[RMDB]
Source: RMDB libraries RFM100 and RFMREP, as collected in RNAgym. The record gives the reactivity of an RNA of 177 nucleotides to DMS and 2A3. For DMS the reverse transcriptase was MarathonRT. Reactivities are given for positions 27 through 126.
RNA sequence: GGGAACGACUCGAGUAGAGUCGAAAACGCCUCUAAGUCAGAAUCCGUACCGGAACGCGGCGAUGUUGCCCCGCACGUUGUAGUUGGAUACGAAUAGGCCUACGGGCCCUGAACCUCAGCAGGUCGGUCUAUGACAUAUAUUCGUAUAUGUCAUAGAAAAAGAAACAACAACAACAAC
Reactivity to DMS in 0.01 (KOAc 150mM, MgCl2 10mM, bicine 150mM(pH8.5), 24C), signal-to-noise 6, nucleotides 027 to 126: c140g010c030c010u010c060u000a080a110g010u010c040a070g010a150a110u010c030c020g020u010a060c060c020g000g010a070a060c060g010c080g000g010c050g000a090u010g010u000u020g000c010c020c010c040g010c090a060c080g020u000u020g010u000a050g010u000u000g010g010a070u000a040c050g000a070a080u010a100g000g010c010c000u010a100c130g010g010g010c000c000c020u000g000a070a070c070c020u010c070a060g020c100a040g010g010u000c040g010g010
Reactivity to 2A3 in 0.01 (KOAc 150mM, MgCl2 10mM, bicine 150mM(pH8.5), 24C), signal-to-noise 9, nucleotides 027 to 126: c020g020c000c000u010c030u040a060a030g020u030c020a020g050a090a110u030c040c020g020u030a020c000c030g040g040a030a020c020g000c010g030g000c020g030a140u020g020u050u110g080c010c000c010c000g010c010a030c030g000u010u010g020u010a060g000u010u040g030g010a070u030a070c000g000a040a070u080a110g010g000c000c010u010a040c160g040g000g000c000c000c010u020g020a040a030c010c000u060c040a030g020c020a010g040g030u070c030g010g010

Record summary: Conditions: 150 mM KOAc, 10 mM MgCl2 and 150 mM bicine (pH 8.5), 24 C.